[RMDB]
RNA sequence: GGGAACGACUCGAGUAGAGUCGAAAAGAUAUGGACAUGUUGAAGCAACAGCUAUUCAUCGGAAACGAUGACGGUAGACAUGCUUACACAUGUCCUAAGUCAAAACAGGGUGGUUCGCCACCCUGAACGUAUGCAAGAGCUUCGGCUCUUGCAUACGAAAAGAAACAACAACAACAAC
Reactivity to 2A3 in 0.01 (KOAc 150mM, MgCl2 10mM, bicine 150mM(pH8.5), 24C), signal-to-noise 2, nucleotides 027 to 126: g000a000u010a020u100g030g000a010c000a000u020g020u080u200g130a050a000g000c090a090a200c040a230g050c000u000a040u130u080c020a010u000c020g010g010a000a060a010c010g020a000u020g040a000c160g130g030u040a010g020a090c110a300u300g000c020u040u130a110c060a000c000a040u000g000u020c000c000u010a000a010g000u010c040a000a000a070a160c020a010g010g000g010u000g000g050u080u110c260g130c040c000a000c000c000c000u000g000a000a000
Reactivity to DMS in 0.01 (KOAc 150mM, MgCl2 10mM, bicine 150mM(pH8.5), 24C), signal-to-noise 3, nucleotides 027 to 126: g000a030u040a210u000g000g000a020c000a000u000g000u010u020g020a060a010g010c000a100a060c210a130g010c000u010a010u000u000c010a060u000c000g010g000a030a080a110c020g010a000u000g020a000c300g030g000u000a020g000a040c110a190u030g020c020u000u010a180c300a020c000a000u000g010u000c000c020u000a000a040g000u000c010a080a060a070a290c020a000g010g020g070u000g020g040u000u000c230g020c030c000a000c000c000c000u000g000a030a090